RNA sequence: GGGAACGACUCGAGUAGAGUCGAAAAGACCGUUAGUUCGCUAACGGUCAAAUAAAAUCAGCGGUAACGAGGCGUAAAAUAUUACCGCUGAACGCGUCGUUAAAAACAGGAGCUUCGGCUCCUGUAACUUGUAUUAGGCGUUCGCGCCUAAUACAAGAAAAGAAACAACAACAACAAC
Reactivity to DMS in 0.01 (KOAc 150mM, MgCl2 10mM, bicine 150mM(pH8.5), 24C), signal-to-noise 2, nucleotides 027 to 126: g000a000c000c000g020u000u000a010g000u000u010c170g010c010u000a000a010c000g000g000u000c010a000a030a080u010a060a060a160a070u010c000a000g010c000g010g010u000a010a030c210g000a120g030g020c170g010u010a080a100a060a070u000a120u000u000a000c020c000g010c010u010g000a000a100c060g010c100g010u020c030g010u000u020a050a040a090a120a030c010a000g020g000a000g020c000u000u010c210g020g010c000u000c000c000u000g010u000a010a040
Reactivity to 2A3 in 0.01 (KOAc 150mM, MgCl2 10mM, bicine 150mM(pH8.5), 24C), signal-to-noise 2, nucleotides 027 to 126: g000a000c000c010g010u010u000a000g000u010u020c210g000c150u010a000a000c000g000g000u000c000a000a010a000u010a010a010a000a060u020c000a000g000c000g040g020u010a030a030c070g040a140g190g020c130g100u100a070a080a110a100u250a040u050u010a010c010c000g000c000u000g000a020a010c010g000c020g010u050c010g030u060u100a130a120a050a010a000c000a000g000g010a000g020c000u080u110c190g130g020c000u000c030c000u000g000u000a000a000